[RMDB]
RNA sequence: GGGAACGACUCGAGUAGAGUCGAAAAGAUAUGGAAACAGGCAGCGUUGAAACUAUUGUAUCGGAAACGAUACUAGUGGAGCUGCUGUUUCCUAAGUCAAAGGUGCUGAACUUCGGUUCAGCACCAAGUCUAACGUAAGCUUCGGCUUACGUUAGACAAAAGAAACAACAACAACAAC
Reactivity to 2A3 in 0.01 (KOAc 150mM, MgCl2 10mM, bicine 150mM(pH8.5), 24C), signal-to-noise 2, nucleotides 027 to 126: g000a010u010a000u070g000g020a010a010a020c020a000g300g000c000a010g020c020g230u300u120g000a000a000a000c010u000a010u080u290g000u000a000u000c000g000g000a000a000a000c010g010a000u010a010c000u000a000g000u000g000g050a020g000c010u020g030c000u000g000u010u000u000c000c000u020a000a000g000u000c030a040a090a140g000g000u010g010c000u010g000a010a010c040u060u140c300g210g020u010u000c000a010g000c000a000c000c000a010a000
Reactivity to DMS in 0.01 (KOAc 150mM, MgCl2 10mM, bicine 150mM(pH8.5), 24C), signal-to-noise 1, nucleotides 027 to 126: g000a020u000a010u020g000g010a010a020a010c020a020g020g020c000a000g020c010g030u010u020g000a160a300a020c000u000a010u020u020g010u000a000u000c000g020g000a010a000a020c000g020a040u000a010c010u000a000g030u000g020g000a040g030c010u010g000c020u000g010u000u000u000c000c000u020a010a060g000u010c000a110a130a090g020g020u000g000c000u020g010a000a000c000u000u010c280g030g000u000u000c010a010g010c000a000c000c000a020a060

Structure probing data (2A3 and DMS) for a 177-nucleotide construct.
The DMS profile rests on 2,084 reads.
The data come from the RNA Mapping Database (RMDB), library TTRDES.
Conditions: 150 mM KOAc, 10 mM MgCl2 and 150 mM bicine (pH 8.5), 24 C.
Reactivities are given for positions 27 through 126.